This 177-nucleotide RNA was probed chemically with DMS and 2A3.
The 2A3 profile rests on 484 reads.
The RNA was probed in 150 mM KOAc, 10 mM MgCl2 and 150 mM bicine (pH 8.5) at 24 C.
RNA sequence: GGGAACGACUCGAGUAGAGUCGAAAACUGUUUUAAGUCCAGUAACCUGUAGUUAUAAGUGCCUAUUGAUAGAUGUAACGACUGCUUCUUUUACAGUGUCUGAGCUUGACCAAAAGAAGUUUGGGAAAUUCUCCAAUCUGUUCGCAGAUUGGAGAAUAAAAGAAACAACAACAACAAC
Reactivity to DMS in 0.01 (KOAc 150mM, MgCl2 10mM, bicine 150mM(pH8.5), 24C), signal-to-noise 2, nucleotides 027 to 126: c010u000g020u040u000u020u010a020a110g000u010c060c010a090g010u000a090a070c140c020u000g000u000a090g020u000u000a070u000a060a070g000u000g000c030c040u000a130u000u000g020a170u000a080g010a120u000g010u000a080a040c110g010a040c060u000g020c040u010u010c060u000u000u000u000a110c190a130g000u000g020u000c020u000g000a090g000c090u000u020g000a070c020c040a040a020a070a110g000a100a060g020u010u000u010g010g000g000a100a110
Reactivity to 2A3 in 0.01 (KOAc 150mM, MgCl2 10mM, bicine 150mM(pH8.5), 24C), signal-to-noise 1, nucleotides 027 to 126: c010u050g060u110u010u050u170a110a000g040u060c000c000a000g000u010a000a190c030c030u060g070u150a040g030u080u060a080u030a230a140g000u060g130c060c000u070a120u110u100g100a070u030a120g080a040u070g030u060a040a050c110g010a080c020u010g000c000u000u050c000u090u060u030u030a060c040a020g040u080g000u140c020u040g140a040g090c070u050u100g000a000c000c000a000a020a020a020g040a150a010g010u100u300u080g000g090g080a050a070